[RMDB]
RNA sequence: GGGAACGACUCGAGUAGAGUCGAAAAACUAUUUGUUCUAUAGCAAAGAAACCCGAAACACAGGAUAUAUUUGUUAUAUAUGCUUUGUGGGACACAGCUGUUAGGACAUGAGCCAUCAGGGUCCAAAACUAUACUAUGCGUUCGCGCAUAGUAUAGUAAAAGAAACAACAACAACAAC
Reactivity to 2A3 in 0.01 (KOAc 150mM, MgCl2 10mM, bicine 150mM(pH8.5), 24C), signal-to-noise 8, nucleotides 027 to 126: a000c090u100a110u100u060u060g020u010u000c010u010a030u040a030g000c030a090a180a070g050a090a120a070c000c000c020g080a090a100a000c020a000c000a000g020g010a010u000a000u000a010u030u150u140g140u300u010a010u010a000u010a000u050g150c000u020u040u020g020u070g010g000g020a020c030a000c000a080g010c010u010g020u110u040a010g000g020a000c000a030u060g020a010g040c020c010a060u090c060a060g060g010g060u040c020c000a020a060a000
Reactivity to DMS in 0.01 (KOAc 150mM, MgCl2 10mM, bicine 150mM(pH8.5), 24C), signal-to-noise 5, nucleotides 027 to 126: a190c070u010a070u010u000u010g010u000u010c030u000a020u000a020g010c000a050a060a120g010a080a140a070c010c010c020g020a130a150a090c060a020c050a020g010g010a010u000a010u010a020u010u020u040g000u040u040a040u020a010u000a010u010g000c000u010u000u000g020u010g010g000g000a110c150a080c200a090g010c040u000g000u010u010a020g000g000a020c000a030u020g000a050g000c060c040a100u020c110a070g000g010g000u000c010c040a050a040a120
Record summary: Structure probing data (2A3 and DMS) for a 177-nucleotide construct. For 2A3 the reverse transcriptase was SuperScript II with manganese. The data come from the RNA Mapping Database (RMDB), library OK1LIB. Conditions: 150 mM KOAc, 10 mM MgCl2 and 150 mM bicine (pH 8.5), 24 C.